[RMDB]
RNA sequence: GGGAACGACUCGAGUAGAGUCGAAAACGUAAUAUGUUCGCAUAUUACGAAAUCUCCAAUCAUGGCUAACCAGGAUCCUCCGAUGAAUUAAAGCCCUCGGUAAAAGGAGCGGGUUCGCCCGCUCCAACAUUAUUGGGCUGUUCGCAGCCCAAUAAUGAAAAGAAACAACAACAACAAC
Reactivity to DMS in 0.01 (KOAc 150mM, MgCl2 10mM, bicine 150mM(pH8.5), 24C), signal-to-noise 2, nucleotides 027 to 126: c010g010u000a000a020u000a000u000g010u000u010c180g020c000a000u000a000u000u000a000c020g010a010a070a090u000c030u000c020c140a110a050u010c090a070u000g000g010c030u010a110a130c080c070a030g000g000a090u000c030c030u000c000c050g010a110u000g010a040a070u010u010a100a120a150g010c040c000c020u000c080g020g020u000a030a060a130a100g000g000a000g010c000g000g020g040u000u040c220g000c000c000c000g030c000u000c000c000a010a050
Reactivity to 2A3 in 0.01 (KOAc 150mM, MgCl2 10mM, bicine 150mM(pH8.5), 24C), signal-to-noise 1, nucleotides 027 to 126: c020g000u000a000a000u010a000u060g030u020u060c120g030c060a010u000a000u000u000a000c000g000a080a000a030u040c000u000c000c000a040a090u070c040a070u110g080g050c050u100a070a060c040c060a080g040g040a070u010c010c040u030c000c060g020a060u070g010a090a200u140u080a220a010a070g020c000c000c000u040c030g020g100u130a080a090a060a060g000g010a000g000c010g000g020g000u030u050c150g110c000c010c020g030c020u000c000c010a000a010

An RNA of 177 nucleotides, treated with DMS and 2A3 and read out base by base. Source: RMDB library M2PK50, as collected in RNAgym. For 2A3, 927 sequencing reads were counted. The reactions ran in a buffer of 150 mM KOAc, 10 mM MgCl2 and 150 mM bicine (pH 8.5), at 24 C. Reactivities are rounded to 0.1 and cut off at 0 and 3. For DMS, 1,144 sequencing reads were counted.